[RMDB]
RNA sequence: GGGAACGACUCGAGUAGAGUCGAAAAACUACCUGUAUCCGAUCGUGGCGCUCCGAAUUCGCGGGAUCGCACUGCCGGGUCCGCUGCGGCGGCUGUCGGAGGGUAUCGCGCUGCUGAUCACCACCGGCGGUACAGAAGGAUUCGUCCUUCUGUACCGAAAAGAAACAACAACAACAAC
Reactivity to 2A3 in 0.01 (KOAc 150mM, MgCl2 10mM, bicine 150mM(pH8.5), 24C), signal-to-noise 3, nucleotides 027 to 126: a000c060u100a090c020c010u060g070u160a100u050c050c050g050a080u050c050g060u060g040g000c020g000c030u020c020c010g060a130a160u290u110c080g000c030g090g000g110a070u120c040g010c070a050c070u070g090c030c010g030g020g020u050c040c030g010c030u060g020c050g110g000c000g020g000c020u100g010u070c020g010g020a050g010g030g020u050a060u100c030g000c020g030c120u110g000c030u110g030a020u030c040a020c010c010a010c030c010g100g000
Reactivity to DMS in 0.01 (KOAc 150mM, MgCl2 10mM, bicine 150mM(pH8.5), 24C), signal-to-noise 4, nucleotides 027 to 126: a110c180u000a130c030c010u000g020u000a100u000c060c040g000a050u010c110g010u010g010g000c010g010c070u000c030c030g000a100a180u010u010c130g010c060g000g000g010a060u010c080g000c050a090c050u000g010c100c010g020g000g010u000c080c040g020c030u000g030c110g010g000c010g010g010c130u000g000u010c020g020g000a110g020g000g010u000a040u000c040g000c030g000c110u010g000c030u000g010a050u000c070a060c050c040a040c030c020g000g000